[RMDB]
RNA sequence: GGGAACGACUCGAGUAGAGUCGAAAAAGAGAAAGGUGGACCAGAUGACAAGAAAGCCCACCCACAGGAGGGCUUAUCCAUUCAGUCAGUGGAACAAGGGGGCACAUAUAUGUUGAGACAGGAACUCCGAUUGGCAUUGUUUCGACAAUGCCAAUCGAAAAGAAACAACAACAACAAC
Reactivity to DMS in 0.01 (KOAc 150mM, MgCl2 10mM, bicine 150mM(pH8.5), 24C), signal-to-noise 1, nucleotides 027 to 126: a110g010a070g000a070a100a100g010g010u000g000g010a180c060c090a080g020a120u000g010a100c130a120a180g000a110a140a010g000c010c020c010a220c060c000c230a070c280a150g000g040a060g010g020g030c010u000u010a040u030c060c060a040u000u000c080a080g010u010c070a010g000u000g000g000a010a090c140a030a060g010g000g000g000g000c040a020c090a050u000a040u000a080u000g000u010u020g000a140g000a060c080a000g000g010a070a040c020u010c080